Conditions: 150 mM KOAc, 10 mM MgCl2 and 150 mM bicine (pH 8.5), 24 C. Chemical mapping of a 207-nucleotide RNA with 2A3. Values cover nucleotides 27 to 156. 2A3 adducts were read by reverse transcription with SuperScript II with manganese. Source: RMDB library OK3TST, as collected in RNAgym.

RNA sequence: GGGAACGACUCGAGUAGAGUCGAAAACUGAGGUAGGAGGAUCACUUGAGCCCAGGAGAUCAAGGCUUCAGCAGUGACUGUGCCACUGUAUACACACACACACACACACAUAUUCCUUUAUAUAUAUCUAUCCAUUUAUAUAUAAUGCAUGUGUAUCGUAAUAUUAUGCGUUCGCGCAUAAUAUUACAAAAGAAACAACAACAACAAC
Reactivity to 2A3 in 0.01 (KOAc 150mM, MgCl2 10mM, bicine 150mM(pH8.5), 24C), signal-to-noise 3, nucleotides 027 to 156: c030u030g010a010g010g030u050a030g050g050a020g000g000a030u020c030a010c070u060u120g040a020g000c000c030c020a020g000g050a090g000a020u080c040a040a040g040g000c000u100u060c050a020g000c020a010g020u010g060a070c030u040g040u060g070c070c000a040c010u030g000u100a070u150a060c060a020c000a000c010a000c010a000c000a000c020a000c060a040c050a020c030a010u150a230u180u270c010c000u040u020u030a030u000a000u000a010u020a040u090c020u160a300u190c020c000a040u060u160u000a030u000a000u000a000u020a040a060u100g030c030a030u050g030u040g020u080a090u210c070